[RMDB]
RNA sequence: GGGAACGACUCGAGUAGAGUCGAAAAGGCCAUUCCUGGUGAGAGGACUUGCUCCUCGAGCUGGGGGUGGCCGCAGAGACCAGCGAGAAGCGACUGUUUACUAAAAACACAGGUCCGUGCGAAGCCGGACGAUUAAACUCUUCGGAGUUUAAUCGUCAAAAGAAACAACAACAACAAC
Reactivity to DMS in 0.01 (KOAc 150mM, MgCl2 10mM, bicine 150mM(pH8.5), 24C), signal-to-noise 7, nucleotides 027 to 126: g010g010c000c010a030u000u000c000c000u000g000g010u000g000a300g000a020g010g000a010c020u000u000g010c220u010c000c000u000c010g010a300g000c000u000g010g010g000g000g050u000g000g000c000c010g000c050a030g000a220g000a100c010c010a110g000c020g010a110g010a170a190g000c030g000a110c070u010g000u000u000u010a100c180u010a050a080a070a080a060c090a050c080a110g010g010u000c050c040g010u010g000c030g010a130a170g010c060c090g000
Reactivity to 2A3 in 0.01 (KOAc 150mM, MgCl2 10mM, bicine 150mM(pH8.5), 24C), signal-to-noise 2, nucleotides 027 to 126: g010g010c000c000a010u010u010c000c000u020g000g000u040g000a060g000a000g020g010a000c040u140u230g040c130u030c000c000u000c000g000a010g000c010u010g000g000g000g000g000u010g000g000c000c000g000c000a000g040a010g020a050c010c030a000g010c030g030a090g020a180a030g030c040g040a040c040u040g060u050u060u060a140c140u150a090a100a090a130a020c030a010c010a040g050g050u030c100c040g060u050g030c030g070a070a030g050c050c040g080

An RNA of 177 nucleotides, treated with DMS and 2A3 and read out base by base.
It was measured as part of the RMDB library OK2TRN.